[RMDB]
RNA sequence: GGGAACGACUCGAGUAGAGUCGAAAAUCCAAGGGGUUCGCCCCUUGGAAAAUAAGGGAAACCGAGCAUUCCGGUCGACUCCCGAGAGCCAAAGUCAAAUAAAAACCGUUGGGUUCGCCCAACGGAACCAUAGUUGGUACUUCGGUACCAACUAUGGAAAAGAAACAACAACAACAAC
Reactivity to 2A3 in 0.01 (KOAc 150mM, MgCl2 10mM, bicine 150mM(pH8.5), 24C), signal-to-noise 1, nucleotides 027 to 126: u000c000c000a000a000g030g000g000g030u040u080c140g100c010c000c000c000u000u010g000g000a000a000a000a000u030a010a000g010g010g000a070a020a030c030c020g020a030g080c080a210u250u000c120c000g040g000u000c060g030a070c010u030c040c030c020g040a030g000a010g050c020c010a050a040a000g070u110c050a020a100a100u170a060a180a000a080a120c010c000g000u010u000g020g000g000u060u060c210g020c020c010c000a000a000c000g000g000a010a000
Reactivity to DMS in 0.01 (KOAc 150mM, MgCl2 10mM, bicine 150mM(pH8.5), 24C), signal-to-noise 1, nucleotides 027 to 126: u000c000c020a010a010g000g000g000g030u000u000c270g040c010c000c010c000u040u000g000g000a000a020a100a080u010a080a160g010g000g010a050a070a040c040c000g000a130g020c060a150u000u000c090c020g000g000u000c020g010a160c090u000c010c000c000g000a210g000a140g010c040c070a080a060a120g000u010c070a080a050a150u020a030a060a140a110a160c000c010g030u000u000g000g010g010u010u000c220g010c000c000c000a000a000c000g000g010a000a030